[RMDB]
RNA sequence: GGGAACGACUCGAGUAGAGUCGAAAAUACGCUAAGUUCGCUUAGCGUAAAAUAAAUGGGACUAUAUAAAACCUGAUAGCCGUAGAAGAUCAUGUAUCGGCAAAAUCACCAUCUUCGGAUGGUGAAAUAGUAAAGAUCUAUUCGUAGAUCUUUACUAAAAAGAAACAACAACAACAAC
Reactivity to DMS in 0.01 (KOAc 150mM, MgCl2 10mM, bicine 150mM(pH8.5), 24C), signal-to-noise 6, nucleotides 027 to 126: u000a000c000g010c010u000a010a000g010u000u010c250g020c010u000u000a000g010c000g020u000a000a030a070a070u010a050a070a080u010g010g010g010a120c110u010a080u010a130u000a080a070a120a140c010c010u010g000a170u000a110g000c010c000g000u000a160g000a130a080g010a080u010c100a070u010g010u000a080u000c010g010g020c030a040a050a080a100u010c000a010c000c000a010u000c000u000u010c170g030g000a010u000g000g000u000g000a000a040a030
Reactivity to 2A3 in 0.01 (KOAc 150mM, MgCl2 10mM, bicine 150mM(pH8.5), 24C), signal-to-noise 5, nucleotides 027 to 126: u040a000c000g000c000u000a010a000g000u010u080c150g040c130u000u000a000g000c000g000u000a000a030a000a000u080a000a060a040u060g000g000g050a030c080u030a000u040a030u070a300a160a030a040c000c010u040g050a090u090a050g010c000c020g020u040a030g040a290a030g050a130u150c050a060u220g060u120a070u080c010g000g000c040a050a010a020a020u010c000a000c000c000a000u000c000u020u060c210g120g010a000u000g000g000u000g000a010a000a000